[RMDB]
RNA sequence: GGGAACGACUCGAGUAGAGUCGAAAAUGCGCUGAGAGCCUUGGCGGCGCUGAGCGCCAAGGAAGUAGCCGUCCUGCUACCGGAUGGGUCGGAGAUGGUCAUCCCGGCCGACGAACUCAAAGAACAGACGUACCCUACGUUUCGACGUAGGGUACGUAAAAGAAACAACAACAACAAC
Reactivity to 2A3 in 0.01 (KOAc 150mM, MgCl2 10mM, bicine 150mM(pH8.5), 24C), signal-to-noise 1, nucleotides 027 to 126: u130g040c040g000c070u050g040a020g000a020g050c000c000u020u000g030g000c080g070g000c080g050c160u170g070a060g030c020g030c010c000a010a010g000g000a020a000g000u020a020g010c000c000g080u040c000c000u000g020c000u010a010c060c000g030g170a140u090g220g090g000u000c000g010g020a150g020a080u080g070g260u150c110a030u010c050c000c030g040g000c000c000g020a020c000g030a050a040c010u080c110a050a080a020g030a080a020c050a060g140
Reactivity to DMS in 0.01 (KOAc 150mM, MgCl2 10mM, bicine 150mM(pH8.5), 24C), signal-to-noise 2, nucleotides 027 to 126: u000g040c180g020c060u020g000a100g020a110g000c010c000u000u000g000g000c020g050g080c050g050c200u010g010a080g010c000g010c000c040a000a010g000g040a020a040g000u000a030g000c000c040g010u000c040c030u000g000c040u000a020c070c000g010g020a100u000g020g020g050u000c000g010g020a090g010a000u000g030g000u000c090a250u000c000c000c010g020g020c000c010g020a050c030g010a080a140c030u000c000a040a090a140g010a090a070c200a120g030
An RNA of 177 nucleotides, treated with 2A3 and DMS and read out base by base. It was measured as part of the RMDB library OK2TST. The 2A3 profile rests on 1,196 reads. 2A3 adducts were read by reverse transcription with SuperScript II with manganese.